[RMDB]
RNA sequence: GGGAACGACUCGAGUAGAGUCGAAAAAUGCUUCGGCUGCGUCGUCAUGACCAGAUUAACGGAAAAGAAGUACCGGAAAUUAUUCUGCUGAAUAGCCAUGAUGGUUCAAGCAGCUAUAAAAUGAUCCUAUACCAUGAAAUUUCGAUUUCAUGGUAUAAAAAGAAACAACAACAACAAC
Reactivity to 2A3 in 0.01 (KOAc 150mM, MgCl2 10mM, bicine 150mM(pH8.5), 24C), signal-to-noise 9, nucleotides 027 to 126: a000u130g030c040u100u120c060g030g000c010u010g020c030g020u030c000g010u020c040a040u070g030a060c020c020a020g010a090u060u100a090a030c030g050g040a060a070a060a120g180a150a040g060u070a090c000c000g040g040a030a090a020u110u060a060u120u040c020u020g050c010u030g060a170a120u110a120g040c030c000a040u110g020a040u110g040g060u090u080c050a070a050g000c010a000g000c010u020a020u120a090a120a030a060u120g040a050u010c000c000
Reactivity to DMS in 0.01 (KOAc 150mM, MgCl2 10mM, bicine 150mM(pH8.5), 24C), signal-to-noise 9, nucleotides 027 to 126: a070u020g010c150u010u020c090g000g010c020u000g000c040g010u010c020g000u020c040a030u010g010a110c100c110a060g010a060u010u010a050a190c030g000g010a070a070a130a130g010a130a090g010u030a110c020c030g000g010a070a090a100u010u010a040u010u000c010u010g010c160u040g020a070a080u040a060g000c080c000a040u020g000a050u010g000g010u040u020c160a080a120g000c000a010g000c050u000a050u030a040a060a080a060u010g000a130u020c010c020
An RNA of 177 nucleotides, treated with 2A3 and DMS and read out base by base. For 2A3, 21,165 sequencing reads were counted. Values are in units of 0.01, from 0 to 300, in steps of 10. DMS adducts were read by reverse transcription with MarathonRT. 2A3 adducts were read by reverse transcription with SuperScript II with manganese.